[RMDB]
RNA sequence: GGGAACGACUCGAGUAGAGUCGAAAAGCAAUGGCAACUCGAACAAUGACUGUGCCGUCUCCAGUGAAUAUCACCAUGGCUACAGCCGUGAAAGCAGCGGAAAGCCUCAGAAGCGAGCUUGCAGAGAUGCGGAUUAGCAGUUCGCUGCUAAUCCGCAAAAAGAAACAACAACAACAAC
Reactivity to DMS in 0.01 (KOAc 150mM, MgCl2 10mM, bicine 150mM(pH8.5), 24C), signal-to-noise 2, nucleotides 027 to 126: g030c120a070a050u000g000g010c000a070a030c040u000c080g010a130a030c110a140a090u000g000a000c030u030g000u030g000c010c000g030u010c040u000c040c040a100g000u000g040a150a080u000a080u020c000a030c060c100a080u000g000g000c000u000a130c200a150g000c000c040g030u010g000a040a140a110g000c170a060g000c040g000g000a140a010a060g010c040c010u010c150a060g010a160a080g000c030g010a060g000c110u000u010g010c010a060g000a160g010a080
Reactivity to 2A3 in 0.01 (KOAc 150mM, MgCl2 10mM, bicine 150mM(pH8.5), 24C), signal-to-noise 1, nucleotides 027 to 126: g020c040a040a180u070g020g020c030a000a020c000u000c020g030a140a040c050a110a200u090g070a040c040u090g060u170g160c010c020g040u030c000u030c020c000a020g010u070g040a160a060u110a130u270c010a050c040c000a030u050g010g000c020u070a090c050a070g000c000c010g020u000g000a070a070a020g060c070a030g060c020g010g030a130a000a000g050c010c030u000c010a100g030a060a010g060c010g020a000g000c050u070u070g000c000a010g040a050g020a030

Structure probing data (DMS and 2A3) for a 177-nucleotide construct. Reactivities are given for positions 27 through 126. 2A3 is a SHAPE reagent: it acylates the 2'-hydroxyl of flexible nucleotides of all four kinds. The reactions ran in a buffer of 150 mM KOAc, 10 mM MgCl2 and 150 mM bicine (pH 8.5), at 24 C. DMS (dimethyl sulfate) methylates the pairing face of unpaired adenines and cytosines. The data come from the RNA Mapping Database (RMDB), library OK2TST. The 2A3 profile rests on 873 reads. DMS adducts were read by reverse transcription with MarathonRT.